[RMDB]
RNA sequence: GGGAACGACUCGAGUAGAGUCGAAAAUCGGAUUCUCCGUCGUGAUGAGGCUGCGCGCAUGGCCAGCAGACAAUGCGCCAUCCACGAUAAAAUCCUGCACCCGCUGCGGCAGUUUCAACAGGCGCAAACUGCUAGGUAGGUUCGCCUACCUAGCAGUAAAAGAAACAACAACAACAAC
Reactivity to DMS in 0.01 (KOAc 150mM, MgCl2 10mM, bicine 150mM(pH8.5), 24C), signal-to-noise 2, nucleotides 027 to 126: u000c160g000g010a200u000u000c030u010c060c060g050u010c020g010u010g020a120u020g000a070g000g020c070u010g000c050g030c030g010c030a020u000g000g000c080c110a150g030c060a010g020a120c200a080a080u010g000c000g020c000c010a070u000c060c050a070c040g010a050u010a070a130a080a120u010c020c000u010g000c100a130c030c020c040g000c090u000g020c020g000g020c050a040g010u000u020u000c030a030a090c040a070g000g020c020g010c110a020a050
Reactivity to 2A3 in 0.01 (KOAc 150mM, MgCl2 10mM, bicine 150mM(pH8.5), 24C), signal-to-noise 1, nucleotides 027 to 126: u130c020g050g040a030u020u010c020u010c040c020g000u020c040g070u020g060a130u040g020a020g050g000c020u010g030c190g000c000g020c080a040u120g030g000c030c070a040g000c020a010g060a040c090a060a160u110g020c000g020c000c000a050u020c050c020a040c040g000a010u080a060a110a010a030u070c000c030u000g000c010a050c010c020c000g000c020u030g000c040g010g000c000a000g000u020u050u020c020a080a060c020a070g030g000c000g000c090a070a090
Structure probing data (DMS and 2A3) for a 177-nucleotide construct. High DMS reactivity at an A or C suggests that its Watson-Crick edge is free. Reactivities are rounded to 0.1 and cut off at 0 and 3. For DMS the reverse transcriptase was MarathonRT. For DMS, 1,408 sequencing reads were counted. For 2A3 the reverse transcriptase was SuperScript II with manganese.